Structure probing data (2A3 and DMS) for a 177-nucleotide construct. As a SHAPE reagent, 2A3 marks flexible, mostly unpaired nucleotides at the ribose 2'-OH. Values cover nucleotides 27 to 126. The reactions ran in a buffer of 150 mM KOAc, 10 mM MgCl2 and 150 mM bicine (pH 8.5), at 24 C. It was measured as part of the RMDB library OK1LIB.
[RMDB]
RNA sequence: GGGAACGACUCGAGUAGAGUCGAAAAACAAACAGCAGCAGAGCUCUAACCAUGAGGCAGUCACAUCGCUGCGUGAGUCUCAACGCCACGAACGGCGGGUGGAGAGUUUGCUCCACUAUUGUGAGCAGAGUCACGUAUACUUCGGUAUACGUGACUCAAAAGAAACAACAACAACAAC
Reactivity to 2A3 in 0.01 (KOAc 150mM, MgCl2 10mM, bicine 150mM(pH8.5), 24C), signal-to-noise 5, nucleotides 027 to 126: a000c040a000a070a000c020a010g020c000a000g000c020a020g010a010g050c000u000c010u080a130a090c030c010a090u200g020a030g100g020c040a040g090u120c030a020c030a080u130c070g010c030u010g000c000g000u050g010a020g060u000c000u000c040a030a090c010g010c010c010a110c180g210a300a020c100g030g000c000g000g020g000u010g020g000a000g000a010g010u010u260u200g030c000u000c000c000a010c000u060a090u030u270g090u060g070a020g000c090a050
Reactivity to DMS in 0.01 (KOAc 150mM, MgCl2 10mM, bicine 150mM(pH8.5), 24C), signal-to-noise 3, nucleotides 027 to 126: a070c040a040a040a160c090a050g000c010a020g000c010a020g000a120g020c030u020c010u020a150a130c200c300a080u000g000a050g000g040c060a080g010u010c020a050c170a120u020c030g030c060u000g000c000g050u010g010a070g040u020c020u000c010a070a240c000g020c000c000a160c180g040a050a080c170g010g010c000g040g010g000u000g000g010a030g000a100g010u010u000u000g000c000u010c000c000a010c000u000a010u030u010g020u010g000a090g000c030a150